[RMDB]
RNA sequence: GGGAACGACUCGAGUAGAGUCGAAAAUCGGCCCCUCUACAGCCGCAGCCGAGCCAGGAGAGGCCAGCUGCAACAACUUCUCUCCCCUGGGAGGCGGCCUGCCUACAGACAAGCCCACAACAGGCAGGAUUACCGUCAUUUUCGAAUGACGGUAAUCAAAAGAAACAACAACAACAAC
Reactivity to 2A3 in 0.01 (KOAc 150mM, MgCl2 10mM, bicine 150mM(pH8.5), 24C), signal-to-noise 2, nucleotides 027 to 126: u100c010g070g000c020c020c060c000u050c040u070a220c050a000g050c030c080g010c030a020g010c010c000g090a020g040c010c010a080g060g130a170g090a040g040g030c040c010a020g000c030u100g000c000a110a030c050a030a040c170u210u100c070u040c020u040c030c000c010c000u020g050g000g010a020g020g050c090g010g010c010c000u000g020c000c000u010a030c030a010g060a030c050a070a020g030c000c000c000a060c010a010a060c010a020g020g000c000a010g040
Reactivity to DMS in 0.01 (KOAc 150mM, MgCl2 10mM, bicine 150mM(pH8.5), 24C), signal-to-noise 3, nucleotides 027 to 126: u000c120g000g010c000c000c040c040u000c030u020a070c110a060g000c080c160g020c030a060g000c030c010g000a120g000c010c040a100g000g010a100g000a140g020g000c090c060a030g010c020u010g030c090a070a090c150a100a090c070u010u010c080u000c020u000c020c010c040c010u000g010g000g010a070g030g020c090g000g000c000c020u000g000c010c020u010a130c150a110g000a110c110a100a090g010c010c000c020a090c110a080a070c160a060g000g020c050a110g000